[RMDB]
RNA sequence: GGGAACGACUCGAGUAGAGUCGAAAAGGAGGCAAGUUCGCUUGCCUCCAAAGAAGCUCAAUUUGACGCAAACAUCCGCGUCAUCGCGAGCAAGCGAGGAAAAAACCGUGAACUUCGGUUCACGGAACAUUAGCCUUGACUUCGGUCAAGGCUAAUGAAAAGAAACAACAACAACAAC
Reactivity to DMS in 0.01 (KOAc 150mM, MgCl2 10mM, bicine 150mM(pH8.5), 24C), signal-to-noise 3, nucleotides 027 to 126: g030g000a010g010g000c000a000a020g020u020u000c130g040c010u000u000g000c000c000u000c000c000a000a020a050g000a120a130g020c000u020c000a070a300u000u000u000g000a010c000g010c000a120a130a080c200a050u020c220c180g000c000g010u000c000a030u000c080g000c300g000a000g000c010a080a070g010c070g000a130g020g010a010a070a040a040a160a070c010c000g010u010g000a010a020c000u000u030c180g000g010u010u000c010a000c000g010g000a020a040
Reactivity to 2A3 in 0.01 (KOAc 150mM, MgCl2 10mM, bicine 150mM(pH8.5), 24C), signal-to-noise 2, nucleotides 027 to 126: g010g010a000g000g000c000a030a000g040u000u100c050g040c070u010u000g010c000c000u000c010c000a000a010a000g010a020a000g000c000u000c010a070a100u000u020u000g030a000c030g030c010a010a260a290c070a300u100c150c090g010c010g040u000c010a000u020c020g000c010g050a000g010c000a020a020g040c030g080a110g140g090a120a070a020a040a010a030c010c000g010u000g000a000a000c000u040u070c210g070g000u000u030c010a010c010g030g000a000a000